[RMDB]
RNA sequence: GGGAACGACUCGAGUAGAGUCGAAAAAAUAAUCUUCAGGGCAGGGUGAAAUUCCCGAUCGGCGGUAAAGUCCGCGAGCCGAACGAGAAAGGUUUGGCAGGAACCGGUGAGAUUCCGGUACCGACAGCAAAGCCUCAACACUUCGGUGUUGAGGCAACGAUAACACAGUAUUCGUACUGUGUUAUCGAAAAGAAACAACAACAACAAC
Reactivity to 2A3 in 0.01 (KOAc 150mM, MgCl2 10mM, bicine 150mM(pH8.5), 24C), signal-to-noise 2, nucleotides 027 to 156: a000a000u170a030a020u030c060u160u100c050a020g080g020g040c020a020g020g000g000u030g000a020a040a040u060u000c000c010c020g000a110u170c000g000g000c000g000g000u000a000a000a000g000u010c000c000g000c000g000a020g010c000c000g010a000a000c000g000a010g170a220a100a060g090g000u000u000u010g010g000c020a000g000g020a000a000c000c000g000g000u000g000a010g000a010u000u000c000c000g000g010u000a000c000c010g030a000c010a000g050c020a060a100a010g000c000c000u000c000a000a000c010a010c010u030u100c230g100g000u020g000u000u000g000a000g010g010c010a000a000
Reactivity to DMS in 0.01 (KOAc 150mM, MgCl2 10mM, bicine 150mM(pH8.5), 24C), signal-to-noise 2, nucleotides 027 to 156: a020a100u010a070a040u000c030u000u000c030a070g040g020g020c070a070g010g000g030u010g010a090a100a300u000u010c010c010c010g000a080u000c030g040g000c010g000g000u000a090a160a060g000u000c030c000g020c010g010a220g000c000c000g020a040a060c050g000a210g040a150a190a140g010g010u000u000u010g020g040c010a120g000g000a040a030c000c000g020g010u000g000a230g000a300u000u000c000c010g000g020u000a020c000c010g010a070c080a090g010c080a080a080a140g010c000c010u010c000a000a010c010a020c000u000u000c240g070g050u000g020u000u010g000a010g030g040c010a000a010